[RMDB]
RNA sequence: GGGAACGACUCGAGUAGAGUCGAAAACGCCGUCGUUCAACACGACCCUGACCUACGUGGCUCGGCAUCUCACCCCGUUGUCCACGGACAACUUCAACGUCUCUGCCGUCCUAGCGAACAGUGGCGCUGAGAGUGACAUUUUCGAAUGUCACUCUCAAAAAGAAACAACAACAACAAC
Reactivity to DMS in 0.01 (KOAc 150mM, MgCl2 10mM, bicine 150mM(pH8.5), 24C), signal-to-noise 4, nucleotides 027 to 126: c120g000c050c080g040u000c040g020u000u000c150a090a130c150a080c060g000a090c040c040c050u000g020a080c060c030u010a090c070g050u000g010g030c050u000c050g000g010c050a080u000c050u010c090a190c100c060c010c040g010u020u010g000u020c010c020a120c230g000g010a040c040a010a050c060u010u010c090a030a070c020g000u000c000u000c010u000g030c060c030g000u010c040c050u000a070g020c030g000a090a100c050a080g000u000g000g000c030g020c100
Reactivity to 2A3 in 0.01 (KOAc 150mM, MgCl2 10mM, bicine 150mM(pH8.5), 24C), signal-to-noise 3, nucleotides 027 to 126: c050g050c040c030g040u010c020g020u060u110c110a090a030c020a020c080g050a070c000c000c050u120g050a110c020c030u090a060c070g030u040g030g030c020u020c030g020g040c030a110u050c030u050c090a080c000c000c000c000g080u110u050g010u010c000c020a030c100g020g000a010c020a050a030c000u190u140c050a100a040c020g040u000c030u000c030u060g050c000c010g080u060c030c030u050a040g010c000g040a030a000c000a030g040u050g030g040c000g000c060